Structure probing data (2A3) for a 177-nucleotide construct. The reactions ran in a buffer of 150 mM KOAc, 10 mM MgCl2 and 150 mM bicine (pH 8.5), at 24 C. 2A3 adducts were read by reverse transcription with SuperScript II with manganese. Values cover nucleotides 27 to 126. Values are in units of 0.01, from 0 to 300, in steps of 10. The 2A3 profile rests on 328 reads.
RNA sequence: GGGAACGACUCGAGUAGAGUCGAAAAGAACUGGAUAUAGGUCUUUUCCCCGUCACUAUAGACCCGUGUCGGCCGCCAGCCGGCAUUGCCGGAGACGGAAUAGGAGAAAUUCAACUGCUCGGCCGGUCGCAUGGGCAUCCUUCGGGAUGCCCAUGCGAAAAGAAACAACAACAACAAC
Reactivity to 2A3 in 0.01 (KOAc 150mM, MgCl2 10mM, bicine 150mM(pH8.5), 24C), signal-to-noise 1, nucleotides 027 to 126: g010a010a140c010u050g000g080a050u250a180u060a180g030g000u010c050u000u070u010u040c000c000c000c000g010u060c020a020c150u020a000u000a300g090a140c000c010c000g060u050g000u030c030g000g000c000c000g180c070c000a000g000c000c000g010g000c090a180u080u190g080c000c000g060g000a050g000a000c030g020g220a100a100u130a180g010g010a030g160a070a140a000u190u040c010a180a050c060u000g000c020u000c020g090g000c150c050g020g000u030